This 207-nucleotide RNA was probed chemically with 2A3 and DMS. The 2A3 profile rests on 901 reads. The reactions ran in a buffer of 150 mM KOAc, 10 mM MgCl2 and 150 mM bicine (pH 8.5), at 24 C. For DMS, 2,050 sequencing reads were counted.

RNA sequence: GGGAACGACUCGAGUAGAGUCGAAAAUGGUAGUCCGCCACUCCAAGGGGACGCCUUUAGAAGAAGAGGCUAGGUGGUAUUCCGGUGUGGGAUACUUGGUAAUAUGUAACGCUAAUUGCAUAAGAUUAAAACUUUGCAUACUUCGGUAUGCAAAGAACUAUUGUAAGGGCUUCGGCCCUUACAAUAGAAAAGAAACAACAACAACAAC
Reactivity to 2A3 in 0.01 (KOAc 150mM, MgCl2 10mM, bicine 150mM(pH8.5), 24C), signal-to-noise 2, nucleotides 027 to 156: u140g010g010u030a140g010u000c040c040g050c120c040a040c030u130c050c000a130a140g050g000g000g000a010c020g040c000c010u110u150u080a140g000a140a000g030a020a010g000a020g050g000c060u040a000g020g080u030g030g030u080a040u060u040c060c030g080g070u060g020u120g060g000g020a000u010a060c000u010u100g020g000u070a050a100u070a120u110g030u050a030a020c040g010c170u090a140a050u030u080g000c020a020u000a210a130g020a060u140u250a010a080a050a050c050u000u030u000g000c000a000u010a000c000u020u030c090g030g000u000a000u000g000c000a000a000a000g000a000a000
Reactivity to DMS in 0.01 (KOAc 150mM, MgCl2 10mM, bicine 150mM(pH8.5), 24C), signal-to-noise 1, nucleotides 027 to 156: u020g020g020u000a100g020u000c000c040g050c050c000a100c070u010c080c040a050a210g040g000g010g050a140c060g030c020c010u000u010u000a080g000a100a140g000a080a060g020a100g010g000c040u000a020g000g020u020g030g050u010a050u000u000c020c000g040g050u010g000u070g020g040g010a030u010a010c070u010u000g000g010u020a050a150u000a040u020g000u020a030a060c070g010c050u010a020a110u020u010g020c000a040u000a080a130g000a160u010u000a030a050a110a100c030u000u010u010g050c000a010u020a020c000u040u000c290g030g020u010a010u000g020c000a000a000a020g020a030a140